[RMDB]
RNA sequence: GGGAACGACUCGAGUAGAGUCGAAAACCCGCCAGGCGAGAUUUCGCUGAUGCAUCAGCACAUCGUACAGCGACUGACUGAACGUAUUGGGCAGCGUUAUAUCAUUAUUUUGCGGCGGUGCAUUCAGAGAGGUGAAAUACUUCGGUAUUUCACCUCUAAAAGAAACAACAACAACAAC
Reactivity to 2A3 in 0.01 (KOAc 150mM, MgCl2 10mM, bicine 150mM(pH8.5), 24C), signal-to-noise 1, nucleotides 027 to 126: c000c000c000g000c030c010a100g000g000c090g060a050g050a210u140u300u020c020g000c020u020g010a010u100g000c000a010u010c010a020g080c000a010c000a130u050c020g030u160a020c020a030g030c060g220a300c090u060g030a040c000u010g000a060a040c060g020u220a170u050u110g030g010g020c020a030g060c030g010u050u040a130u010a020u170c060a070u020u270a090u010u150u100u080g050c030g080g000c000g010g000u000g000c010a020u060u100c070a020g030
Reactivity to DMS in 0.01 (KOAc 150mM, MgCl2 10mM, bicine 150mM(pH8.5), 24C), signal-to-noise 2, nucleotides 027 to 126: c000c000c000g010c130c200a040g000g020c000g000a040g020a080u000u010u000c010g020c000u000g000a020u000g030c030a030u000c020a070g030c010a120c050a040u010c170g020u000a060c100a030g020c030g020a140c100u000g000a120c010u000g010a030a070c260g000u000a070u000u010g010g010g020c030a040g010c030g000u000u000a060u010a050u000c150a100u010u010a040u000u010u000u000g010c020g000g000c050g000g000u000g000c010a020u000u000c110a080g000
The record gives the reactivity of an RNA of 177 nucleotides to 2A3 and DMS. For 2A3 the reverse transcriptase was SuperScript II with manganese. Source: RMDB library OK2TRN, as collected in RNAgym. For DMS the reverse transcriptase was MarathonRT.